Structure probing data (DMS and 2A3) for a 207-nucleotide construct. DMS adducts were read by reverse transcription with MarathonRT. The DMS profile rests on 6,722 reads.
RNA sequence: GGGAACGACUCGAGUAGAGUCGAAAAGAUUAAGUGGGAGCGUCGCCCUAUCGGUGCAUCGGAUAUUAAUUAGCCAGUGCGUGGCACUACGCAUAUUGAUGUCUACUUUGGCGUAGACUAUGCCAAUUUAAGGAUUGCUGGGCAAUCCAGCCCUAGAAGCUGAUUAUUAGUUCGCUAAUAAUCAGCUAAAAGAAACAACAACAACAAC
Reactivity to DMS in 0.01 (KOAc 150mM, MgCl2 10mM, bicine 150mM(pH8.5), 24C), signal-to-noise 2, nucleotides 027 to 156: g000a150u000u000a030a120g010u010g000g010g010a070g040c060g030u000c060g000c040c010c010u000a120u000c080g030g010u000g020c040a070u010c060g020g000a090u000a080u010u010a050a140u010u000a180g020c040c020a070g030u000g010c020g030u000g000g000c040a110c020u000a060c040g000c020a190u000a090u000u010g020a120u000g030u000c040u000a080c040u000u010u010g010g010c050g030u010a040g050a080c100u000a020u000g020c000c020a040a080u000u000u000a050a100g020g010a080u000u000g000c020u010g010g010g020c030a060a090u000c070c050a140g010c000c020c010u010a090g010a120
Reactivity to 2A3 in 0.01 (KOAc 150mM, MgCl2 10mM, bicine 150mM(pH8.5), 24C), signal-to-noise 5, nucleotides 027 to 156: g070a040u170u150a110a030g050u120g020g020g010a050g020c030g020u060c020g070c000c020c000u040a080u090c030g020g010u030g030c030a030u070c040g030g010a010u010a040u120u090a170a060u070u090a030g020c020c030a020g000u020g010c050g040u060g060g000c070a030c080u070a010c020g020c020a010u030a080u120u100g080a080u080g030u000c020u040a040c040u050u070u120g050g000c030g010u000a030g030a020c060u030a040u050g010c000c010a060a060u080u100u100a100a040g030g020a040u040u080g040c060u060g030g040g000c000a000a010u040c010c000a010g000c000c000c010u060a110g020a090